[RMDB]
RNA sequence: GGGAACGACUCGAGUAGAGUCGAAAAGAUAUGGAUCCGACCCUGAAUUGGUUUCGUUGAAAUCGGAAACGAUGGAGAAAGAAGAUUCAGCGGAUCCUAAGUCAAAACACUUGCUUCGGCAAGUGAAGCUAACAUAGGGCUUCGGCCCUAUGUUAGCAAAAGAAACAACAACAACAAC
Reactivity to DMS in 0.01 (KOAc 150mM, MgCl2 10mM, bicine 150mM(pH8.5), 24C), signal-to-noise 1, nucleotides 027 to 126: g010a070u000a300u000g010g010a010u000c000c000g040a170c300c140c030u000g000a070a000u000u000g000g030u010u000u000c030g030u010u010g000a110a090a000u020c000g010g020a120a110a240c000g060a000u010g000g000a280g000a000a060a060g010a250a290g020a010u000u000c000a050g000c040g050g000a000u000c000c000u000a000a080g000u000c050a090a120a090a180c000a000c000u000u000g000c000u000u020c300g010g000c000a000a000g040u000g000a040a090